An RNA of 177 nucleotides, treated with 2A3 and DMS and read out base by base. The DMS profile rests on 9,391 reads. It was measured as part of the RMDB library OK1LIB.
RNA sequence: GGGAACGACUCGAGUAGAGUCGAAAAGUGCGCCGCUAUUCAGGGGUCAUUCGUAUCGUGUGAGCGUGAUUUUGUACGUUACGUGAUCUCUCACCCCUGGGAGAUCUUUCAUACUGCACGUUAGAAAGGGUUAACUAAAGUUCGCUUUAGUUAACCCAAAAGAAACAACAACAACAAC
Reactivity to 2A3 in 0.01 (KOAc 150mM, MgCl2 10mM, bicine 150mM(pH8.5), 24C), signal-to-noise 8, nucleotides 027 to 126: g090u110g030c050g020c000c010g010c040u050a060u080u160c030a030g000g000g010g020u050c040a070u100u100c090g080u090a060u040c020g000u020g030u040g110a060g010c040g010u030g100a130u020u110u110u190g110u090a050c080g020u030u040a010c040g000u050g040a020u000c010u000c010u000c020a100c010c010c000c010u000g010g010g000a020g000a010u000c000u000u060u030c030a030u040a050c000u010g000c000a000c020g040u060u080a060g070a050a050a020
Reactivity to DMS in 0.01 (KOAc 150mM, MgCl2 10mM, bicine 150mM(pH8.5), 24C), signal-to-noise 4, nucleotides 027 to 126: g010u010g010c010g020c010c010g010c060u010a060u000u040c050a060g010g000g000g030u010c140a150u010u010c040g010u000a010u010c040g010u000g010u000g000a060g020c040g020u010g010a060u010u020u020u040g000u040a040c140g010u000u000a050c110g000u000g000a010u000c010u000c030u000c090a070c060c010c060c060u030g020g000g000a050g000a010u000c020u000u010u020c060a040u010a100c030u020g000c010a020c010g000u000u030a070g020a100a080a130